[RMDB]
RNA sequence: GGGAACGACUCGAGUAGAGUCGAAAACCGCUGUGGGUUCGCCUACAAGAACGUACGGUGUUGAGGCCCUGUCCGCCGCUGCGCUGCCACCUACUCUUCGCGCCGCUAGUCGAGCGGACUCCAGGUGGGAGCUUCCCUAUUCUCUCACGCUCUUUUCGGCUCAUCAUAAGUUCGCUUAUGAUGAGCCAAAAGAAACAACAACAACAAC
Reactivity to 2A3 in 0.01 (KOAc 150mM, MgCl2 10mM, bicine 150mM(pH8.5), 24C), signal-to-noise 2, nucleotides 027 to 156: c010c000g030c120u030g010u050g020g040g060u090u010c070g030c020c020u100a080c070a080a100g080a100a020c050g140u070a010c040g000g030u080g030u090u070g090a070g070g000c000c020c060u020g000u010c000c020g000c000c000g000c010u020g020c000g000c020u030g040c000c000a050c020c020u100a110c040u070c120u300u170c080g000c020g000c140c000g020c070u070a040g100u260c110g080a030g040c020g000g040a020c010u030c060c040a060g000g030u020g000g000g000a000g010c010u030u040c010c010c000u030a110u160u070c020u000c000u020c030a050c090g060c000u010c000u020u030u040u090c140